This 207-nucleotide RNA was probed chemically with 2A3 and DMS. It was measured as part of the RMDB library OK3TST. For DMS the reverse transcriptase was MarathonRT. The DMS profile rests on 1,578 reads.
RNA sequence: GGGAACGACUCGAGUAGAGUCGAAAAAAUGCGAAAUUUCCGCGAAACAGAAUGGUAAUGGAAGCACUUGUUAUGAUCGUUUUCGAGUAAGCUAUGUUGGUUAUGACAAAGAAAGAAACAUAGAUGCACUGAAAAUCGAAAAUGAGAAAACCGGAAACGUAAAUUCACUGUUCGCAGUGAAUUUACGAAAAGAAACAACAACAACAAC
Reactivity to 2A3 in 0.01 (KOAc 150mM, MgCl2 10mM, bicine 150mM(pH8.5), 24C), signal-to-noise 2, nucleotides 027 to 156: a000a000u160g000c060g030a080a020a100u040u080u000c050c010g000c050g080a100a010a040c100a020g140a050a110u140g020g020u090a040a040u110g030g030a090a030g050c030a040c030u120u060g070u110u070a140u150g030a050u020c000g020u000u010u040u000c020g020a020g030u060a050a050g020c000u000a030u030g000u000u000g030g100u230u080a090u230g060a070c090a060a140a010g140a050a100a010g070a020a020a000c000a000u010a000g000a040u090g040c050a000c050u120g020a070a060a030a020u090c030g000a000a000a010a020u040g000a020g030a030a070a010a000c030c040g120g010a070a000a000
Reactivity to DMS in 0.01 (KOAc 150mM, MgCl2 10mM, bicine 150mM(pH8.5), 24C), signal-to-noise 1, nucleotides 027 to 156: a230a080u000g000c040g040a090a190a080u010u000u000c000c010g050c120g000a100a060a260c040a060g000a080a090u010g000g030u000a130a110u000g040g000a070a110g030c070a080c040u000u010g000u020u000a140u000g000a090u000c000g080u000u000u000u000c000g030a080g030u000a150a170g000c030u000a040u010g000u010u020g010g020u000u000a080u010g020a300c120a050a040a050g000a080a090a210g020a260a070a070c020a070u000a060g040a050u010g020c090a270c140u000g000a100a040a030a080u000c020g030a050a050a050a040u000g010a070g000a060a070a100a070c160c040g000g000a050a100a160